[RMDB]
The record gives the reactivity of an RNA of 177 nucleotides to DMS and 2A3. 2A3 adducts were read by reverse transcription with SuperScript II with manganese. DMS adducts were read by reverse transcription with MarathonRT. The DMS profile rests on 1,578 reads. The RNA was probed in 150 mM KOAc, 10 mM MgCl2 and 150 mM bicine (pH 8.5) at 24 C.

RNA sequence: GGGAACGACUCGAGUAGAGUCGAAAAUAAAACCAUCGAGCUCUAAUGAGUUCGAUGGAGCAUGAAUGUCUCCUGAGUAUGACUUCAUGCAAAUCAGGAGGUGUCGAGGAAAACUCGACGCCAAAAACAUGCUCACUCCAUUCGUGGAGUGAGCAUGAAAAGAAACAACAACAACAAC
Reactivity to DMS in 0.01 (KOAc 150mM, MgCl2 10mM, bicine 150mM(pH8.5), 24C), signal-to-noise 1, nucleotides 027 to 126: u050a020a060a170a100c020c050a000u000c010g000a000g000c000u000c000u000a130a300u020g010a000g000u000u000c000g000a070u000g010g040a000g080c000a020u000g000a000a040u030g040u000c000u000c120c140u000g000a060g000u040a090u060g000a000c020u040u010c000a000u010g000c000a100a080a090u050c300a060g000g000a300g020g030u000g000u000c000g010a050g030g000a180a010a160a210c000u000c000g000a020c000g010c000c060a000a120a080a020a070
Reactivity to 2A3 in 0.01 (KOAc 150mM, MgCl2 10mM, bicine 150mM(pH8.5), 24C), signal-to-noise 4, nucleotides 027 to 126: u150a000a040a000a010c000c000a000u010c000g000a000g000c000u000c030u150a300a240u300g010a000g000u040u000c000g000a000u000g000g000a000g000c000a010u000g010a010a050u280g000u020c000u090c020c040u180g080a050g130u200a080u220g010a000c000u000u000c000a010u000g000c000a000a000a090u100c110a040g140g090a060g020g000u000g000u020c000g010a000g000g030a070a120a160a210c000u000c000g000a000c000g000c000c000a010a010a010a010a010